RNA sequence: GGGAACGACUCGAGUAGAGUCGAAAAAGUAGAGUGAUCGAAAGGUUAAAAGCACCUUGAAAAGGGAGUUAAAUAGCACGUGAAAUUGUUGAAAGGGAAGCGCUUGCAACCAGACUCGGUCGUGGGGGCUAUGGUACUUCUUCGGAAGUACCAUAGCAAAAGAAACAACAACAACAAC
Reactivity to 2A3 in 0.01 (KOAc 150mM, MgCl2 10mM, bicine 150mM(pH8.5), 24C), signal-to-noise 3, nucleotides 027 to 126: a000g120u140a030g040a030g030u110g000a030u030c030g050a020a040a080g030g000u050u020a100a070a040a000g030c030a040c000c010u000u020g110a100a070a030a040g030g040g020a090g000u090u110a030a070a040u110a150g020c030a030c110g030u100g080a120a090a130u150u120g050u050u120g040a090a010a020g030g020g020a090a000g060c010g000c160u040u020g000c010a000a000c010c020a010g000a060c050u020c040g000g000u010c000g010u100g020g030g020g020
Reactivity to DMS in 0.01 (KOAc 150mM, MgCl2 10mM, bicine 150mM(pH8.5), 24C), signal-to-noise 3, nucleotides 027 to 126: a090g000u010a040g010a160g030u050g000a060u010c020g000a040a080a150g000g000u000u010a030a160a080a090g000c090a120c010c000u010u000g000a050a070a110a070g010g010g000a080g010u020u020a050a040a130u010a080g020c070a030c090g000u010g020a010a060a120u030u000g010u000u010g000a080a110a080g000g000g020a100a190g010c120g000c030u000u000g000c260a070a090c050c030a120g000a060c120u000c010g000g000u000c020g040u000g010g000g000g020